An RNA of 177 nucleotides, treated with DMS and 2A3 and read out base by base.
The DMS profile rests on 2,277 reads.
The 2A3 profile rests on 3,027 reads.
It was measured as part of the RMDB library RFMREP.
For 2A3 the reverse transcriptase was SuperScript II with manganese.
RNA sequence: GGGAACGACUCGAGUAGAGUCGAAAAGUCGCGUGUCACUAACGGGCGACGACUGCGUCCCUGUUCUUUGUACACACCGCCCGUCGUUAUCUAAGAUGGUGCUAUGUUCGAAGAGGGUUUUCCUUCUCCAAAUAUGUUGGUUCGCCAACAUAUUUGGAAAAGAAACAACAACAACAAC
Reactivity to DMS in 0.01 (KOAc 150mM, MgCl2 10mM, bicine 150mM(pH8.5), 24C), signal-to-noise 2, nucleotides 027 to 126: g010u000c010g010c040g010u000g000u000c040a120c160u020a090a160c260g020g010g010c030g010a090c010g000a060c040u000g010c240g020u010c010c000c020u030g010u010u000c000u000u010u000g000u000a000c070a020c050a030c160c130g020c020c000c020g000u000c020g000u010u010a080u020c210u010a050a110g010a030u000g000g000u000g020c040u010a080u010g000u000u000c030g000a010a030g010a050g010g000g020u000u000u000u000c030c010u000u000c050u000
Reactivity to 2A3 in 0.01 (KOAc 150mM, MgCl2 10mM, bicine 150mM(pH8.5), 24C), signal-to-noise 3, nucleotides 027 to 126: g020u020c010g020c090g110u070g080u120c050a040c250u140a180a030c100g040g010g010c020g020a110c020g010a020c050u060g040c070g060u070c000c010c000u010g120u070u020c010u000u010u030g040u090a020c020a000c000a030c090c080g010c010c050c000g000u010c010g070u070u160a130u130c090u090a080a040g010a010u030g040g000u140g030c020u020a030u060g010u020u060c010g000a000a010g010a040g040g000g000u000u000u010u080c030c000u050u070c000u000